Chemical mapping of a 207-nucleotide RNA with 2A3 and DMS. Values cover nucleotides 27 to 156. DMS adducts were read by reverse transcription with MarathonRT. The 2A3 profile rests on 909 reads. It was measured as part of the RMDB library OK3TST.
RNA sequence: GGGAACGACUCGAGUAGAGUCGAAAACAAAAGUCAUUCAGAGCAGGUUGUUCAAUUUCCAUUUAGUUGUAUGGUUUUGAGUGAUUUUCUUAAUCUUGAGUUCUAAUUUGAUUGCACUGUUUAUUAUGAUUUCAGUACUUUUGCAUUUACUGAGGAGGAUAUCAACCUAGUUCGCUAGGUUGAUAUCAAAAGAAACAACAACAACAAC
Reactivity to 2A3 in 0.01 (KOAc 150mM, MgCl2 10mM, bicine 150mM(pH8.5), 24C), signal-to-noise 2, nucleotides 027 to 156: c000a000a120a000a000g040u000c000a020u140u010c020a030g030a010g080c030a020g080g000u020u020g010u060u050c020a030a040u040u110u120c030c040a030u070u090u050a080g010u030u070g080u120a040u050g000g000u030u020u010u020g010a020g010u020g030a020u120u040u000u000c020u000u080a060a070u030c040u020u070g050a070g020u080u030c040u070a070a130u100u080u090g130a170u010u130g000c080a020c050u000g030u060u040u010a060u120u050a090u150g050a050u010u130u020c020a010g020u020a020c050u190u190u170u200g040c010a040u080u110u110a050c030u020g070a060g040g030a040g200
Reactivity to DMS in 0.01 (KOAc 150mM, MgCl2 10mM, bicine 150mM(pH8.5), 24C), signal-to-noise 1, nucleotides 027 to 156: c050a100a010a100a080g010u000c010a050u010u010c030a090g020a050g040c050a070g020g020u010u000g000u000u000c000a030a080u010u000u000c060c040a110u010u010u010a110g000u020u010g010u000a090u010g010g000u000u000u010u000g010a050g050u010g010a050u000u020u000u000c030u000u010a090a070u000c060u000u010g030a070g020u000u000c050u000a000a090u000u010u010g000a070u000u010g000c020a070c060u010g000u000u000u000a070u000u010a170u020g010a140u000u010u010c020a030g000u010a020c100u010u000u000u000g020c110a050u000u000u000a030c040u010g000a050g030g030a180g020